[RMDB]
RNA sequence: GGGAACGACUCGAGUAGAGUCGAAAACAGGGCCUAUCGAUCCUUUAUGUGCUUAAAUCUUAAGCCUAGAGGUGUCAGAAAAGUUACCACAGGGAUAACUGGCUUGUGGCAGCCAAGCGCUCAUAGCGAAAGAGAAUGGGUUCGCCCAUUCUCUUUCAAAAGAAACAACAACAACAAC
Reactivity to 2A3 in 0.01 (KOAc 150mM, MgCl2 10mM, bicine 150mM(pH8.5), 24C), signal-to-noise 2, nucleotides 027 to 126: c050a010g010g020g020c000c010u060a100u090c040g010a020u040c000c010u020u040u040a160u250g110u120g000c010u040u060a060a260a300u120c050u110u040a040a040g000c020c000u010a000g010a010g020g030u080g070u030c000a000g050a000a140a010a000g010u020u070a000c010c000a020c040a040g070g080g030a080u080a230a070c080u120g170g020c000u030u050g000u030g020g030c010a020g010c000c020a060a000g040c060g000c030u060c070a080u160a030g010c010
Reactivity to DMS in 0.01 (KOAc 150mM, MgCl2 10mM, bicine 150mM(pH8.5), 24C), signal-to-noise 3, nucleotides 027 to 126: c070a120g010g010g000c020c020u010a150u000c090g010a060u010c000c000u000u010u000a030u010g020u010g030c000u000u000a010a140a180u010c220u000u000a000a020g010c000c020u010a030g000a010g000g000u010g020u000c040a120g010a060a070a090a120g010u000u000a040c010c020a060c060a050g000g000g000a100u010a050a110c170u000g020g010c030u000u000g020u000g000g000c030a030g000c010c040a100a060g020c070g010c020u000c040a050u000a120g010c300